Structure probing data (2A3) for a 177-nucleotide construct. Reactivities are given for positions 27 through 126. Conditions: 150 mM KOAc, 10 mM MgCl2 and 150 mM bicine (pH 8.5), 24 C. The 2A3 profile rests on 1,002 reads. 2A3 adducts were read by reverse transcription with SuperScript II with manganese.
[RMDB]
RNA sequence: GGGAACGACUCGAGUAGAGUCGAAAAGAAGUGGCAGGGACAUGCCCCAGAAGCUCGUUCUAGCAACAUAUGUUUGGCUAGUUCGAGCGAUUAGUCUAGAGGAGCGUCCUCUCGCCUCUUCACGAGACGCUAUCGUGACCUUCGGGUCACGAUAGCGAAAAGAAACAACAACAACAAC
Reactivity to 2A3 in 0.01 (KOAc 150mM, MgCl2 10mM, bicine 150mM(pH8.5), 24C), signal-to-noise 2, nucleotides 027 to 126: g000a000a000g000u000g000g030c010a000g000g020g020a020c030a050u250g000c020c000c000c040a000g010a100a040g000c000u000c010g000u000u000c000u010a000g000c010a000a080c030a090u240a090u270g100u100u130u130g100g010c000u000a010g010u000u000c000g000a000g000c030g000a000u020u030a070g040u000c060u020a040g000a140g090g000a070g050c000g070u010c000c000u030c000u020c050g000c000c000u000c000u000u000c000a020c060g110a100g020a010